Chemical mapping of a 177-nucleotide RNA with DMS.
Conditions: 150 mM KOAc, 10 mM MgCl2 and 150 mM bicine (pH 8.5), 24 C.
The DMS profile rests on 1,202 reads.
[RMDB]
RNA sequence: GGGAACGACUCGAGUAGAGUCGAAAACAUCUAGUACAACAAUUAAAUCUGCUCCUAGUUUUUGUUGUAUUUGUAUAGAUUUUUCUGGAGUUAGGUGAUAUGUGCUACCGUUUAUAUAGGAUUUAAAAGUCGUGAUUAAUUUCGAUUAAUCACGACUAAAAGAAACAACAACAACAAC
Reactivity to DMS in 0.01 (KOAc 150mM, MgCl2 10mM, bicine 150mM(pH8.5), 24C), signal-to-noise 1, nucleotides 027 to 126: c140a070u000c140u000a070g020u020a000c020a030a030c030a020a030u010u010a030a080a090u000c040u020g030c070u000c040c040u020a110g000u000u000u000u000u000g000u000u000g000u000a040u010u010u010g020u020a090u000a080g020a060u000u020u000u000u000c040u020g030g020a090g020u000u020a050g020g030u000g000a080u020a040u000g010u000g010c060u000a020c060c030g000u010u010u010a060u010a080u000a120g000g000a090u000u020u000a070a090a120